[RMDB]
RNA sequence: GGGAACGACUCGAGUAGAGUCGAAAAAAUAAGAAAAUGCCGGAUGUAGGUGCUAUUCCUGACAUCAUGCGCCAAGCAUUAUCAAUUUCAUUUGAUAGUUACGUUGGUCAUGAUUGGAUGGAUGACUACGAAGCACGUUGGCUAUCUUAUAUGAAUACUAAGGGUUAGCUUUCGAGCUAACCCUUAGAAAAGAAACAACAACAACAAC
Reactivity to DMS in 0.01 (KOAc 150mM, MgCl2 10mM, bicine 150mM(pH8.5), 24C), signal-to-noise 2, nucleotides 027 to 156: a120a090u010a010a030g010a040a030a070a190u010g020c000c000g000g030a070u010g020u000a090g010g030u010g020c090u000a160u020u010c020c040u000g000a300c060a050u040c000a020u010g000c180g010c020c000a010a040g000c130a040u000u010a020u010c000a010a010u010u000u000c220a210u040u000u000g020a030u000a010g000u000u000a000c060g000u010u000g050g010u000c030a030u000g000a040u010u040g020g010a300u010g030g010a030u000g010a060c060u000a080c010g020a190a300g000c000a060c040g000u010u020g040g000c040u010a120u000c020u000u020a030u000a040u020g010a130a120u000a190
Reactivity to 2A3 in 0.01 (KOAc 150mM, MgCl2 10mM, bicine 150mM(pH8.5), 24C), signal-to-noise 1, nucleotides 027 to 156: a000a000u120a020a020g040a050a090a010a030u100g010c000c000g130g010a140u180g020u100a040g120g050u020g010c000u060a100u050u020c000c000u010g050a020c000a000u020c010a010u000g010c030g040c100c000a000a020g030c000a010u010u040a000u040c010a000a000u100u240u300c160a110u000u010u110g030a000u000a000g000u040u030a100c120g050u070u000g010g000u010c000a010u020g050a090u040u120g090g000a020u030g000g040a010u040g080a020c020u100a090c020g120a090a020g020c010a010c120g030u100u090g010g000c000u000a010u000c000u000u000a010u000a000u040g070a080a050u160a250
Record summary
This 207-nucleotide RNA was probed chemically with DMS and 2A3. For 2A3 the reverse transcriptase was SuperScript II with manganese. The data come from the RNA Mapping Database (RMDB), library OK3TST.